Chemical mapping of a 177-nucleotide RNA with DMS and 2A3. For DMS, 2,715 sequencing reads were counted. Reactivities are given for positions 27 through 126. The RNA was probed in 150 mM KOAc, 10 mM MgCl2 and 150 mM bicine (pH 8.5) at 24 C. Source: RMDB library RFM100, as collected in RNAgym.
RNA sequence: GGGAACGACUCGAGUAGAGUCGAAAAUGGGUUUAGACCGUCGUGAGACAGGUCGGUUGCUAUCUAACGGGGGUGUCAGGGCGGCUGAGGGGAAGGAGGCUCUAGUACGAGAGGAACGAGCCUCCGGGAUCCAUGUCCCUUUCGAGGGACAUGGAUCAAAAGAAACAACAACAACAAC
Reactivity to DMS in 0.01 (KOAc 150mM, MgCl2 10mM, bicine 150mM(pH8.5), 24C), signal-to-noise 2, nucleotides 027 to 126: u030g010g010g010u000u000u060a080g000a010c000c000g000u000c010g030u090g000a190g000a020c000a100g040g000u000c010g010g040u000u000g000c110u020a070u000c060u000a070a060c080g020g000g020g010g000u000g000u060c090a060g000g000g000c160g000g030c100u050g020a100g040g000g000g000a100a100g010g020a030g000g020c000u020c000u000a050g010u010a030c000g000a180g010a190g000g000a120a070c100g000a000g000c000c000u000c000c030g010g000
Reactivity to 2A3 in 0.01 (KOAc 150mM, MgCl2 10mM, bicine 150mM(pH8.5), 24C), signal-to-noise 2, nucleotides 027 to 126: u080g080g050g000u040u110u130a030g020a010c010c000g000u030c010g000u050g090a110g020a020c130a240g040g000u010c010g000g010u050u050g000c030u040a190u300c000u050a060a070c060g040g000g000g040g020u080g180u140c090a020g000g040g030c050g020g000c030u030g000a050g050g010g000g020a010a090g030g000a030g000g000c000u000c000u000a000g070u000a000c000g000a000g010a020g120g000a030a000c000g000a000g010c000c030u000c000c000g000g000